[RMDB]
RNA sequence: GGGAACGACUCGAGUAGAGUCGAAAAGUUCAGCGCCUCGACAGCUUCCGCGUUCAGCUUCAGUUCGACACGCUUAAGGCCACGUACUUUGUCGCGUUUUAGCUGGUUGCGUUUAUUAAUACGCAGCCCUUCUGACACGAUUCGUCGUGUCAGAAGGAAAAGAAACAACAACAACAAC
Reactivity to 2A3 in 0.01 (KOAc 150mM, MgCl2 10mM, bicine 150mM(pH8.5), 24C), signal-to-noise 1, nucleotides 027 to 126: g010u140u060c020a030g080c000g000c030c030u040c030g050a040c020a020g020c010u070u020c030c040g000c020g090u060u080c050a040g010c000u020u030c040a060g020u040u020c050g050a050c030a020c070g090c000u070u070a060a030g040g000c000c040a060c050g090u110a020c040u060u110u100g060u060c060g060c090g050u000u080u000u140a050g010c040u060g000g000u030u010g000c000g020u020u000u040a110u040u100a130a040u070a050c000g000c030a000g050c010
Reactivity to DMS in 0.01 (KOAc 150mM, MgCl2 10mM, bicine 150mM(pH8.5), 24C), signal-to-noise 3, nucleotides 027 to 126: g010u000u010c060a130g010c070g000c040c040u000c030g030a120c110a100g000c060u010u000c090c080g010c080g000u020u010c070a070g000c010u000u000c100a090g020u000u000c080g010a050c080a060c110g000c040u000u010a080a090g020g010c010c050a090c130g020u000a040c060u000u000u000g030u010c070g010c090g020u020u000u000u010a070g020c120u000g010g010u000u000g010c000g020u000u000u000a130u000u000a090a050u000a040c000g010c000a010g000c010